[RMDB]
RNA sequence: GGGAACGACUCGAGUAGAGUCGAAAAGAUAUGGAGGAUCCUACCCACCUCGGAGUACGAGGCUUGGAUUUACUCGUCGGAAACGACGAGUUGUCAGCCUUGAAACGAGAGGGAUCCUCCUAAGUCAAACCAGCGCAUAGUUCGCUAUGCGCUGGAAGAAACAUAAGGUCUUCGGACCUUAUGUUUCAAAAGAAACAACAACAACAAC
Reactivity to 2A3 in 0.01 (KOAc 150mM, MgCl2 10mM, bicine 150mM(pH8.5), 24C), signal-to-noise 1, nucleotides 027 to 156: g100a030u130a090u300g020g000a000g020g000a000u000c000c060u070a300c030c000c000a000c000c000u000c000g000g000a010g030u000a020c130g000a010g010g000c020u150u240g070g000a010u080u020u150a010c000u000c000g000u010c010g000g090a140a020a140c000g010a000c010g050a010g000u000u010g000u000c000a000g060c000c000u100u040g000a030a000a000c000g000a000g000a010g000g060g000a000u000c000c000u000c000c000u000a000a000g010u010c020a050a020a120c000c000a010g000c020g000c000a000u000a000g000u070u070c300g030c180u000a000u030g000c000g000c000u000g000g000a010a000